[RMDB]
RNA sequence: GGGAACGACUCGAGUAGAGUCGAAAAGAGAUUUCCGUUCUAAGAUUAACUGGGAAACUUCAGUGGAGCAAUCCAGCAGAGAUCCAGUUGCCGUGGGUAUGGCGGUGGGAUCGCAACCAAGUGGUAUAUGUUAUGGAAGAUAUUUACGAUCACGAUUCUAACACUUUAGGUUCGCCUAAAGUGUUAGAAAAGAAACAACAACAACAAC
Reactivity to 2A3 in 0.01 (KOAc 150mM, MgCl2 10mM, bicine 150mM(pH8.5), 24C), signal-to-noise 3, nucleotides 027 to 156: g060a000g010a000u040u040u000c000c010g000u080u030c050u140a110a140g020a140u160u040a090a000c020u060g000g010g030a150a120a050c030u080u040c030a090g070u030g020g010a010g000c040a000a120u000c010c010a020g050c010a030g030a000g020a080u000c010c020a000g030u050u030g000c000c020g010u030g020g070g030u150a050u130g040g030c030g020g010u070g000g020g020a010u040c040g000c030a030a060c030c030a160a040g030u060g040g020u020a070u010a030u130g090u090u050a050u120g030g010a030a020g030a060u050a100u090u170u120a070c040g010a040u100c040a010c100g020a010u020u000